[RMDB]
RNA sequence: GGGAACGACUCGAGUAGAGUCGAAAAAAAUCAAACGCAGCAUGGAAGACACUUAGAACUACACAUUACCUUAAGCUAAGGAAUCAGGUCUGUGAUCUUUUGUUCUGUUUUGUGCUUCUCAUCAUUAAAUGGGGACUCUAUUCGUAGAGUCCCCAUUAAAAGAAACAACAACAACAAC
Reactivity to DMS in 0.01 (KOAc 150mM, MgCl2 10mM, bicine 150mM(pH8.5), 24C), signal-to-noise 1, nucleotides 027 to 126: a030a070a110u010c020a010a040a040c290g000c030a020g040c130a000u000g020g010a030a020g000a010c000a010c010u010u010a060g000a050a000c020u010a070c180a060c300a050u000u000a110c000c010u010u000a080a080g010c280u000a080a000g020g000a060a020u000c130a100g000g000u010c010u000g000u000g020a110u010c000u010u000u000u000g010u000u000c000u010g000u000u010u000u000g020u000g010c240u000u000c000u000c020a090u040c100a120u000u000a040

Conditions: 150 mM KOAc, 10 mM MgCl2 and 150 mM bicine (pH 8.5), 24 C. Chemical mapping of a 177-nucleotide RNA with DMS. The data come from the RNA Mapping Database (RMDB), library OK2TST. DMS adducts were read by reverse transcription with MarathonRT.